An RNA of 207 nucleotides, treated with DMS and 2A3 and read out base by base.
In probing experiments dimethyl sulfate is read out at A N1 and C N3, which are open when not base-paired.

RNA sequence: GGGAACGACUCGAGUAGAGUCGAAAAAAAACCUUUGUGUGAAUGGAGAGCAGCUCAGCGUGUGCCUACCUUAAAUGGAGGUGAUCCCAUUGGGAUCACCGAUGAAAUUUAAGUAACCCGUUGAACCCUGCUCGAUGAAAUUCACACUCUGGUAAAACAUAAGAGAGUAGUUCGCUACUCUCUUAUGAAAAGAAACAACAACAACAAC
Reactivity to DMS in 0.01 (KOAc 150mM, MgCl2 10mM, bicine 150mM(pH8.5), 24C), signal-to-noise 1, nucleotides 027 to 156: a000a060a170a030c000c010u000u000u000g010u000g000u000g000a040a000u020g010g000a120g030a050g020c000a050g010c060u010c030a030g050c020g000u000g040u010g020c000c050u000a290c160c020u010u000a010a010a010u000g000g010a120g050g050u000g010a010u000c000c000c000a300u000u000g130g030g030a020u000c000a000c010c000g010a010u010g010a090a100a000u000u010u000a020a000g020u000a040a050c020c010c010g000u000u010g010a000a020c030c040c110u000g000c000u000c020g000a110u010g000a120a080a050u010u000c000a000c020a020c030u000c030u000g000g000u000a030a020a070a150
Reactivity to 2A3 in 0.01 (KOAc 150mM, MgCl2 10mM, bicine 150mM(pH8.5), 24C), signal-to-noise 3, nucleotides 027 to 156: a000a000a000a020c010c000u000u000u010g000u000g000u010g010a000a010u000g010g010a000g000a000g000c000a000g000c030u000c000a010g000c020g020u160g090u170g140c030c060u090a110c030c010u040u000a010a000a010u020g000g000a000g000g010u010g000a010u000c000c010c090a300u200u300g010g000g000a000u000c010a000c000c010g020a030u000g000a000a000a000u010u010u000a010a010g000u020a030a020c020c040c000g010u010u010g010a020a030c100c010c010u000g000c000u000c000g000a000u010g000a000a010a000u020u000c000a000c000a000c000u010c010u010g010g000u040a040a060a020a000
The data come from the RNA Mapping Database (RMDB), library RNAMAK.